[RMDB]
RNA sequence: GGGAACGACUCGAGUAGAGUCGAAAACAGUCAGUGCAGGGCGGGACAACAGUCACGUGUUGCUUCCCAAGACAUACAGUCACGGGCCCCUUAACAACAAGGAUGCAUUCUGGGAAAUGGUGAUUAGAUCUGGGGUAAUGUUCGCAUUACCCCAGAUAAAAGAAACAACAACAACAAC
Reactivity to DMS in 0.01 (KOAc 150mM, MgCl2 10mM, bicine 150mM(pH8.5), 24C), signal-to-noise 2, nucleotides 027 to 126: c070a070g020u020c090a120g010u000g030c070a040g000g000g040c080g000g000g020a070c020a060a070c030a060g020u000c070a060c200g000u000g020u000u000g000c130u010u000c000c040c010a130a180g000a000c040a120u000a100c170a080g020u000c040a050c140g010g000g030c070c040c000c010u000u000a050a100c100a090a000c150a080a110g010g000a060u010g010c070a060u000u010c020u000g020g000g000a040a050a070u020g010g000u000g000a130u010u020a070g000
Reactivity to 2A3 in 0.01 (KOAc 150mM, MgCl2 10mM, bicine 150mM(pH8.5), 24C), signal-to-noise 1, nucleotides 027 to 126: c010a000g180u120c020a010g030u010g110c000a010g000g060g000c060g000g000g030a010c000a150a000c010a070g070u080c020a000c120g060u080g230u120u040g030c000u020u060c000c020c000a020a020g000a010c000a000u260a050c090a090g040u000c010a030c030g030g060g000c030c000c000c000u200u100a180a100c050a000a000c020a020a040g110g030a020u070g120c050a090u000u130c070u130g010g020g060a000a130a070u130g080g020u070g020a070u080u080a080g030
This 177-nucleotide RNA was probed chemically with DMS and 2A3.
The RNA was probed in 150 mM KOAc, 10 mM MgCl2 and 150 mM bicine (pH 8.5) at 24 C.
For DMS, 1,242 sequencing reads were counted.